Notes: Chemical mapping of a 177-nucleotide RNA with 2A3 and DMS. For 2A3 the reverse transcriptase was SuperScript II with manganese. The DMS profile rests on 2,023 reads. The data come from the RNA Mapping Database (RMDB), library OK1LIB. The reactions ran in a buffer of 150 mM KOAc, 10 mM MgCl2 and 150 mM bicine (pH 8.5), at 24 C. DMS adducts were read by reverse transcription with MarathonRT.
RNA sequence: GGGAACGACUCGAGUAGAGUCGAAAACAAAUAAGGUGUCCUGGCGGGGUUAUCAGCAUGUAAACGCAUUGUGGAUUGACUCUGGAGUCUCGGACUCACAAGGAUGUUCAUGGUGGAUGCUGAGUGCCACUCGUAUGGCCUUCGGGCCAUACGAGUGAAAAGAAACAACAACAACAAC
Reactivity to 2A3 in 0.01 (KOAc 150mM, MgCl2 10mM, bicine 150mM(pH8.5), 24C), signal-to-noise 3, nucleotides 027 to 126: c060a010a150a050u180a040a110g080g010u040g000u050c010c010u020g040g050c030g010g030g020g010u000u110a040u040c020a010g030c000a020u020g030u300a070a110a010c070g000c070a000u020u020g050u030g000g010a000u000u120g070a050c010u020c100u110g010g000a010g020u030c020u100c240g200g010a060c000u000c010a130c000a050a050g080g000a020u070g010u010u010c020a030u030g040g030u010g090g000a010u010g000c000u000g020a000g040u120g020c000
Reactivity to DMS in 0.01 (KOAc 150mM, MgCl2 10mM, bicine 150mM(pH8.5), 24C), signal-to-noise 2, nucleotides 027 to 126: c070a090a100a060u080a230a070g000g000u020g050u000c010c030u000g000g020c070g000g040g000g040u000u010a060u000c000a060g000c030a010u000g020u040a060a090a070c300g010c040a000u030u040g000u010g000g050a050u000u000g000a300c020u020c040u030g000g010a120g000u000c000u090c220g060g010a040c020u000c050a040c050a010a080g030g000a150u000g000u010u000c010a000u000g000g000u000g010g000a040u000g020c000u000g020a050g000u000g000c010